Record summary:
An RNA of 207 nucleotides, treated with 2A3 and read out base by base. The reactions ran in a buffer of 150 mM KOAc, 10 mM MgCl2 and 150 mM bicine (pH 8.5), at 24 C.
RNA sequence: GGGAACGACUCGAGUAGAGUCGAAAAUGGGGAGUGCCCAGCGGCCGACAGGAGUAAUUCCCGCCGAAACAGGGUUUUCACCCUUCCUUUCUUCGGGUGUCCUUCCUCGCGCCCGCAGGACCACCCCUCGCCCCCUUUGCGCUGUCGCUUCGGCUACGAAAUAAGUAUGCUUCGGCAUACUUAUUUCAAAAGAAACAACAACAACAAC
Reactivity to 2A3 in 0.01 (KOAc 150mM, MgCl2 10mM, bicine 150mM(pH8.5), 24C), signal-to-noise 1, nucleotides 027 to 156: u190g010g010g000g010a070g000u080g040c000c010c030a020g000c000g000g000c000c000g020a020c110a130g010g000a030g030u110a010a000u000u010c000c000c000g000c000c000g000a000a010a110c300a120g040g000g000u090u050u300u300c170a010c010c010c000u000u000c000c000u000u000u000c000u050u030c000g000g000g000u000g030u000c000c000u020u040c000c000u030c010g000c060g040c040c040c000g000c010a000g010g020a020c050c030a050c040c020c000c000u010c030g050c020c000c000c020c040u030u150u190g060c070g070c100u150g110u210c050g020c070u090u060c040g010g000c020u060a080c110